[RMDB]
An RNA of 207 nucleotides, treated with 2A3 and read out base by base. Reactivities are given for positions 27 through 156. For 2A3 the reverse transcriptase was SuperScript II with manganese.

RNA sequence: GGGAACGACUCGAGUAGAGUCGAAAAAGUGGCGAUUCGUCGCCACUAAAAAACCUUUGUGCGUGAUGACCUGGAACGAGCCGAAACCCAUUGGGUUUCGGAACUACUCGUACCAGCAAGCGCACUCUGGUAAAAAAGUAACAGUUCGCUGUUACAAGAUCAUUCGAUGGUUCGCCAUCGAAUGAUCAAAAGAAACAACAACAACAAC
Reactivity to 2A3 in 0.01 (KOAc 150mM, MgCl2 10mM, bicine 150mM(pH8.5), 24C), signal-to-noise 2, nucleotides 027 to 156: a000g000u000g000g000c020g020a000u010u100c170g060u050c000g060c020c040a000c000u060a000a000a000a010a000a000c000c000u000u000u000g010u000g000c020g010u020g090a290u170g020a080c010c010u000g000g000a020a000c000g010a000g000c000c000g010a010a000a000c000c030c100a300u160u300g000g000g000u000u000u000c010g000g030a010a000c020u060a010c000u010c010g000u010a070c000c010a000g000c000a010a120g000c000g000c000a000c010u000c000u000g020g000u090a080a090a040a000a000a050g020u010a000a000c000a000g020u050u090c140g090c120u000g000u000u020a020c010a020a020